[RMDB]
RNA sequence: GGGAACGACUCGAGUAGAGUCGAAAACUGGCACCUGCCGCGCCCUGCCUAUCGAGGCCCUGGCAGCUUGGGAUGGGCGCCGUCUGGUUACUGUAAUCUGCCUGAAGUUGGGACAAAAUUGAACAAACAAGAUGAGUUUGGUGCUUUGGAGAGUGUGCCAAAUCCUAUCAUUCGUGAUAGGAUUUGGAAAAGAAACAACAACAACAAC
Reactivity to 2A3 in 0.01 (KOAc 150mM, MgCl2 10mM, bicine 150mM(pH8.5), 24C), signal-to-noise 2, nucleotides 027 to 156: c030u000g040g010c020a030c060c020u070g030c040c040g030c010g030c000c000c000u090g060c020c010u160a230u300c160g120a100g020g020c060c000c020u080g120g010c050a040g050c050u090u120g040g000g040a020u060g020g000g000c020g010c030c000g020u030c040u020g050g000u040u060a070c030u030g020u050a050a130u050c000u040g020c050c020u000g050a040a050g060u190u140g040g000g030a020c040a070a140a030a050u090u160g040a100a060c050a090a090a010c040a050a020g080a160u090g000a020g090u040u120u130g000g000u040g000c000u080u030u070g010g010a040g030a010g010u090g000u060g070
Reactivity to DMS in 0.01 (KOAc 150mM, MgCl2 10mM, bicine 150mM(pH8.5), 24C), signal-to-noise 2, nucleotides 027 to 156: c040u010g030g010c040a020c040c030u020g070c050c030g030c080g010c000c030c010u000g040c010c040u000a130u010c130g010a150g030g020c000c010c010u000g020g030c070a110g000c020u010u000g020g020g020a130u010g010g010g020c010g000c010c060g010u010c030u010g020g030u000u000a050c040u030g010u000a070a070u000c050u030g080c010c020u030g010a060a110g000u010u020g010g000g000a170c050a060a030a060a160u000u020g010a080a140c060a080a060a130c040a060a090g000a130u000g000a070g040u000u010u000g020g020u000g000c030u000u000u000g020g020a070g000a100g030u000g000u020g020
Annotation:
Structure probing data (2A3 and DMS) for a 207-nucleotide construct. It was measured as part of the RMDB library OK3TST. The DMS profile rests on 3,737 reads. For DMS the reverse transcriptase was MarathonRT.